Conditions: 150 mM KOAc, 10 mM MgCl2 and 150 mM bicine (pH 8.5), 24 C.
The record gives the reactivity of an RNA of 207 nucleotides to 2A3 and DMS.
For 2A3, 1,539 sequencing reads were counted.
DMS adducts were read by reverse transcription with MarathonRT.
Source: RMDB library OK3TST, as collected in RNAgym.
[RMDB]
RNA sequence: GGGAACGACUCGAGUAGAGUCGAAAAGCUCGCUGAAUUAAUCACCUCGGAUGCUGGUGCGAGGGUGACAGUUCAAAAUAAGACUUCGCUGUUCACUGAGACGCCAGGUCGUGCAGUCAUCGAAACGACUGAUCCAGAUGCUGUUCGACACAUAUUCCGUUUAACCCUUUUUCGAAAGGGUUAAACGAAAAGAAACAACAACAACAAC
Reactivity to 2A3 in 0.01 (KOAc 150mM, MgCl2 10mM, bicine 150mM(pH8.5), 24C), signal-to-noise 3, nucleotides 027 to 156: g020c010u060c080g090c070u060g080a090a090u110u140a130a070u140c060a050c090c010u050c080g080g040a070u100g050c020u020g000g030u020g020c030g000a090g030g080g000u000g000a000c000a020g020u100u220c110a080a070a110a090u240a160a050g050a090c040u060u030c140g010c020u010g030u190u090c020a000c010u020g020a010g020a080c030g000c010c000a010g040g000u010c000g000u010g000c010a000g080u160c020a010u000c020g110a130a070a080c110g170a090c140u190g060a110u070c040c060a030g010a000u020g010c010u010g000u010u010c010g000a010c010a010c020a040u110a100u150u080c040
Reactivity to DMS in 0.01 (KOAc 150mM, MgCl2 10mM, bicine 150mM(pH8.5), 24C), signal-to-noise 2, nucleotides 027 to 156: g040c050u000c040g040c050u020g000a090a080u000u010a160a110u020c050a080c070c050u000c040g010g020a090u010g000c020u010g010g040u030g030c010g040a210g020g000g040u010g000a000c000a050g020u020u000c070a090a100a090a090u000a150a130g000a150c090u000u000c060g030c010u000g030u010u000c030a080c050u000g000a190g020a080c060g040c010c010a040g000g030u000c010g050u000g010c010a030g000u000c040a050u000c050g000a060a060a130c080g000a150c070u010g000a100u010c010c050a250g010a100u000g010c000u000g000u000u020c000g000a260c050a030c070a110u000a130u010u000c020